[RMDB]
RNA sequence: GGGAACGACUCGAGUAGAGUCGAAAACCAAUGGGAAACCAUUGGCAACUCGGAAACGAGUUGAACGAGGAAUUAGGAUAGAAACUCGCGACAAUGCGAUUUUAAGCAUUGUCGAUUACGCCCAUGUCGAUUUUAAGACAUGGAGCGAACUAUCCAAGCAUGUAGGACCGUUCGCGGUCUUGCAUGCAAAAGAAACAACAACAACAAC
Reactivity to DMS in 0.01 (KOAc 150mM, MgCl2 10mM, bicine 150mM(pH8.5), 24C), signal-to-noise 3, nucleotides 027 to 156: c000c000a020a000u000g000g040g010a260a100a280c000c000a000u000u000g000g010c000a010a010c000u000c000g000g010a160a150a250c020g030a020g030u000u000g000a080a090c070g010a010g010g010a090a150u000u010a120g020g010a050u010a020g010a100a050a020c030u000c020g020c000g010a010c020a010a020u000g000c000g010a240u010u000u020u000a060a300g000c000a010u000u000g000u000c000g010a010u000u000a030c030g020c000c000c000a010u000g000u000c000g010a270u000u000u000u000a100a220g000a010c000a020u000g000g000a040g040c010g000a040a090c000u000a010u000c010c010a110a300
Reactivity to 2A3 in 0.01 (KOAc 150mM, MgCl2 10mM, bicine 150mM(pH8.5), 24C), signal-to-noise 5, nucleotides 027 to 156: c000c000a000a000u000g000g000g010a050a000a000c000c000a000u000u000g000g000c000a000a000c000u000c000g010g020a070a030a020c000g000a000g000u000u000g010a040a010c010g010a000g020g070a130a090u080u040a100g000g000a000u000a000g010a020a070a000c000u000c000g010c000g000a000c000a000a000u000g000c020g050a070u040u090u040u210a070a000g000c000a000u000u000g000u000c000g000a000u000u010a020c000g000c000c000c000a000u000g000u000c020g040a080u000u090u030u270a090a020g000a000c000a000u000g000g000a040g000c000g000a010a020c010u000a000u000c000c000a000a010